Source: RMDB library PDB130, as collected in RNAgym. The record gives the reactivity of an RNA of 207 nucleotides to DMS and 2A3. Values cover nucleotides 27 to 156. The RNA was probed in 150 mM KOAc, 10 mM MgCl2 and 150 mM bicine (pH 8.5) at 24 C. The 2A3 profile rests on 866 reads. For 2A3 the reverse transcriptase was SuperScript II with manganese.
RNA sequence: GGGAACGACUCGAGUAGAGUCGAAAACAUAUACUCUAUCAACCCUAAUCACAACACAAGAGCACAUUUGAAUAAUCUUUACAUCCUGACCCCUAGCCAUAAUAUGAUUUAUCUCAACCCUAGCAGAAACCAACCGAGCCCCGUUCGACCUUACAGACGUAUAUAGUGGCUUCGGCCACUAUAUACGAAAAGAAACAACAACAACAAC
Reactivity to DMS in 0.01 (KOAc 150mM, MgCl2 10mM, bicine 150mM(pH8.5), 24C), signal-to-noise 1, nucleotides 027 to 156: c070a090u000a180u000a050c010u000c040u010a120u010c010a080a110c000c010c010u010a110a210u010c060a200c030a090a060c070a080c070a060a040g000a050g030c000a130c040a090u000u000u000g000a100a040u000a050a070u000c030u020u000u000a090c030a110u010c010c010u000g000a110c000c010c020c010u010a130g050c030c030a040u030a020a110u000a040u020g020a110u000u000u000a080u010c000u000c030a040a080c000c000c020u000a110g000c050a100g000a090a090a060c060c050a110a060c020c040g010a130g030c000c010c010c010g010u010u010c010g010a060c010c000u000u000a040c030a110g000a130
Reactivity to 2A3 in 0.01 (KOAc 150mM, MgCl2 10mM, bicine 150mM(pH8.5), 24C), signal-to-noise 2, nucleotides 027 to 156: c040a020u220a020u100a110c060u030c020u060a070u050c080a090a080c030c020c020u030a030a050u090c060a040c050a150a130c020a010c040a160a010g000a010g070c040a050c020a130u070u110u180g130a160a100u150a110a040u100c070u020u100u110a030c000a020u040c000c010u050g120a100c010c000c000c000u000a000g030c000c000a070u050a100a020u050a140u100g100a050u010u030u190a050u030c050u000c000a040a040c000c000c020u010a000g000c050a000g080a110a020a030c010c010a050a000c010c000g000a010g010c030c000c020c000g010u010u010c000g070a070c000c000u030u060a030c020a050g040a030